The record gives the reactivity of an RNA of 177 nucleotides to 2A3 and DMS.

RNA sequence: GGGAACGACUCGAGUAGAGUCGAAAAUCAAUCUUCGCAUGGACCAGAGGUCUCACACAGCGAGCAAUGCUGGACGGCAACGAGCGUCUCCUCCAAUACUGCUACGCCCUGGAGGCGGCGUGCAUCGGUGCUGAGCUGAUUUCGAUCAGCUCAGCACAAAAGAAACAACAACAACAAC
Reactivity to 2A3 in 0.01 (KOAc 150mM, MgCl2 10mM, bicine 150mM(pH8.5), 24C), signal-to-noise 1, nucleotides 027 to 126: u060c000a030a120u040c030u130u060c060g000c050a100u090g010g000a130c020c000a050g090a030g130g040u030c040u000c060a070c000a000c010a050g050c040g030a010g050c040a070a150u100g010c010u020g060g050a040c020g020g080c000a020a020c060g040a020g040c010g000u000c000u000c000c000u000c000c000a040a040u160a130c060u050g140c020u080a070c070g070c000c000c050u020g030g000a010g010g000c000g000g000c010g000u010g000c000a050u080c070g050
Reactivity to DMS in 0.01 (KOAc 150mM, MgCl2 10mM, bicine 150mM(pH8.5), 24C), signal-to-noise 1, nucleotides 027 to 126: u030c160a140a090u000c030u000u000c050g010c090a220u000g030g000a110c030c060a100g010a160g000g020u000c050u000c050a090c130a080c300a110g020c030g050a030g000c150a080a060u000g000c000u000g000g000a100c080g000g000c100a050a210c100g010a020g010c060g000u010c010u000c000c030u000c040c040a000a060u000a020c130u000g050c030u040a010c120g020c000c080c050u010g000g000a020g010g020c010g000g030c000g020u000g020c180a100u000c050g000